[RMDB]
RNA sequence: GGGAACGACUCGAGUAGAGUCGAAAAAUCAGUCAGCAGAUAGUUUUCGAGGAACUCUUUCGCCAGCUCUUUGUUCGGACUGGCGGCGUUAAUACCUGCGCUCAGCACGCCAACGAACGGUUUGGAACGAUAAUCCAUGAUUCGUCAUGGAUUAUCGAAAAGAAACAACAACAACAAC
Reactivity to 2A3 in 0.01 (KOAc 150mM, MgCl2 10mM, bicine 150mM(pH8.5), 24C), signal-to-noise 4, nucleotides 027 to 126: a000u100c050a030g080u000c030a020g010c010a000g040a120u090a020g070u000u040u040u140c030g040a050g040g080a090a070c020u010c020u090u160u100c040g000c020c000a040g020c040u000c010u100u230u230g100u120u120c040g010g040a040c020u000g000g020c010g010g010c010g040u010u080a100a060u080a180c030c030u040g000c020g030c020u030c030a020g030c030a010c050g000c000c010a060a030c040g040a080a020c030g060g040u060u110u110g070g030a070a040
Reactivity to DMS in 0.01 (KOAc 150mM, MgCl2 10mM, bicine 150mM(pH8.5), 24C), signal-to-noise 6, nucleotides 027 to 126: a070u010c050a080g020u010c050a060g010c030a050g010a090u000a050g010u000u010u000u010c070g020a090g000g010a090a070c070u010c070u000u000u000c030g010c010c010a030g010c110u000c030u010u000u010g000u010u010c130g000g000a050c030u000g010g010c020g020g020c130g000u010u000a050a080u010a090c060c060u000g000c040g010c050u000c100a100g000c060a100c070g010c010c030a040a070c060g000a050a060c080g010g020u000u000u000g010g000a080a190
Description
Structure probing data (2A3 and DMS) for a 177-nucleotide construct. The DMS profile rests on 9,359 reads. The RNA was probed in 150 mM KOAc, 10 mM MgCl2 and 150 mM bicine (pH 8.5) at 24 C. The data come from the RNA Mapping Database (RMDB), library OK2TRN.